[RMDB]
The record gives the reactivity of an RNA of 177 nucleotides to 2A3 and DMS. DMS adducts were read by reverse transcription with MarathonRT. Conditions: 150 mM KOAc, 10 mM MgCl2 and 150 mM bicine (pH 8.5), 24 C. The 2A3 profile rests on 2,093 reads.
RNA sequence: GGGAACGACUCGAGUAGAGUCGAAAAGCGGGCGCGGCCGGCCAGGAAGUAUUCGGUAGCCAGCGCGACCCACGUACGUGGCGUGAAGCCGCCGGUGCCGCGCAUGACCCGCAGACUAGGGUGGGCGGCUGUAAGAUGUGUUCGCACAUCUUACAGCAAAAGAAACAACAACAACAAC
Reactivity to 2A3 in 0.01 (KOAc 150mM, MgCl2 10mM, bicine 150mM(pH8.5), 24C), signal-to-noise 2, nucleotides 027 to 126: g020c000g020g000g000c020g000c010g070g010c010c030g030g030c000c040a080g110g090a110a030g060u150a170u140u130c040g000g020u130a040g040c010c020a040g040c040g000c030g090a120c020c000c030a020c050g100u160a020c090g000u010g000g030c040g010u070g050a040a020g000c010c000g020c020c000g050g010u080g040c010c010g000c060g000c040a030u080g060a080c050c000c010g010c020a000g030a010c090u090a030g030g040g070u140g100g000g000c060g080
Reactivity to DMS in 0.01 (KOAc 150mM, MgCl2 10mM, bicine 150mM(pH8.5), 24C), signal-to-noise 3, nucleotides 027 to 126: g030c040g000g010g000c020g020c040g040g020c030c030g000g000c020c130a170g020g000a080a140g010u010a070u000u000c080g030g010u000a110g020c000c040a150g010c090g010c020g000a080c080c020c030a050c110g010u000a060c150g010u000g020g000c020g010u010g010a160a120g000c020c020g000c000c050g010g010u000g010c000c010g030c020g020c070a120u010g000a120c090c000c010g000c060a050g000a140c150u000a090g000g010g000u010g000g000g010c150g010